[RMDB]
RNA sequence: GGGAACGACUCGAGUAGAGUCGAAAAAGCGAGUACGUACUCGUCGAAAAGACGAGUAAUCCGCGCGCAAAGUACUCGCAGCUCAGAAAUCAAAGUAUCCGAUAAGGAUACGCGCGCGGACUGAGCACCCUCAUCCUCGUUUCGACGAGGAUGAGGGAAAAGAAACAACAACAACAAC
Reactivity to 2A3 in 0.01 (KOAc 150mM, MgCl2 10mM, bicine 150mM(pH8.5), 24C), signal-to-noise 2, nucleotides 027 to 126: a000g010c010g000a010g010u000a000c030g010u000a000c000u000c000g010u000c000g040a190a150a000a020g000a000c000g000a010g010u020a000a080u000c000c000g000c000g000c010g020c120a040a100a020g010u000a000c000u010c000g000c010a010g000c010u010c010a040g130a090a190a080u110c110a130a020a060g000u000a000u000c000c000g050a060u160a300a080g010g000a000u000a010c000g000c000g000c000g000c000g000g000a000c040u050g010a000g050c060a050